[RMDB]
Structure probing data (2A3 and DMS) for a 177-nucleotide construct. The 2A3 profile rests on 4,157 reads. The RNA was probed in 150 mM KOAc, 10 mM MgCl2 and 150 mM bicine (pH 8.5) at 24 C.
RNA sequence: GGGAACGACUCGAGUAGAGUCGAAAAAGCAACGUGUGUGUGUGGGACGUUUUAUCCCAAGCUCUGAGUAGAGCACGCGCUCACACACACCGCGAGCGAGCAUCAGCAGAGCGCAAACGCUGGUAAAACUCUAUCUGAACUUCGGUUCAGAUAGAGUAAAAGAAACAACAACAACAAC
Reactivity to 2A3 in 0.01 (KOAc 150mM, MgCl2 10mM, bicine 150mM(pH8.5), 24C), signal-to-noise 4, nucleotides 027 to 126: a000g050c060a060a070c020g040u040g000u000g000u000g000u010g000u000g190g010g040a050c010g000u040u030u110u220a160u090c050c010c020a010a000g010c000u000c010u070g300a300g130u300a020g230a000g000c000a010c030g050c010g000c010u020c000a000c010a000c000a000c000a000c000c000g020c030g010a020g000c020g010a010g000c010a050u040c010a010g000c000a020g020a020g140c070g000c100a090a060a050c050g010c020u010g030g030u070a090a080a030
Reactivity to DMS in 0.01 (KOAc 150mM, MgCl2 10mM, bicine 150mM(pH8.5), 24C), signal-to-noise 4, nucleotides 027 to 126: a110g010c030a250a050c010g000u000g030u000g010u000g010u000g020u000g000g000g000a100c010g020u000u010u000u010a140u010c040c040c030a110a120g000c000u000c000u000g000a190g000u010a080g010a010g020c000a090c070g010c050g000c010u000c000a010c010a010c010a010c000a010c010c040g010c030g010a140g010c020g000a110g010c050a040u000c040a040g000c040a090g000a100g020c090g030c130a080a090a100c110g000c030u000g000g000u000a040a050a110